[RMDB]
RNA sequence: GGGAACGACUCGAGUAGAGUCGAAAAGUGUUCAAAGCAGACGAUGUUUGAAUACAUUAGCAUGGAAUAAUAAUGUUGUCGUAUGACAUCCAUUGGAUUGUGUUAUAUGAUGUGGAUUAAUAGAAACCCUUUUCUUAGUCUUCGGACUAAGAAAAGGAAAAGAAACAACAACAACAAC
Reactivity to 2A3 in 0.01 (KOAc 150mM, MgCl2 10mM, bicine 150mM(pH8.5), 24C), signal-to-noise 1, nucleotides 027 to 126: g010u020g000u020u010c050a040a010a110g090c000a010g020a160c060g130a170u060g000u020u020u020g010a020a000u010a040c060a120u030u110a010g090c040a040u150g070g100a180a040u050a090a020u090a080a050u110g030u210u100g000u020c020g030u000a000u050g010a010c000a020u000c030c040a120u090u150g030g030a050u010u190g080u000g060u110u050a070u000a000u070g040a000u110g040u040g050g000a070u040u130a080a090u070a180g080a020a030a060c020
Reactivity to DMS in 0.01 (KOAc 150mM, MgCl2 10mM, bicine 150mM(pH8.5), 24C), signal-to-noise 2, nucleotides 027 to 126: g010u000g000u000u010c020a050a010a050g010c050a050g000a120c220g000a080u000g010u000u000u030g000a070a030u000a030c000a100u000u020a110g000c050a070u010g010g000a060a080u000a040a060u000a050a040u020g030u020u010g000u000c020g000u000a060u020g000a030c040a020u010c080c030a130u000u030g020g010a190u010u010g040u010g020u020u000a010u000a030u000g000a020u000g010u000g010g000a080u010u000a040a120u000a080g000a130a110a110c200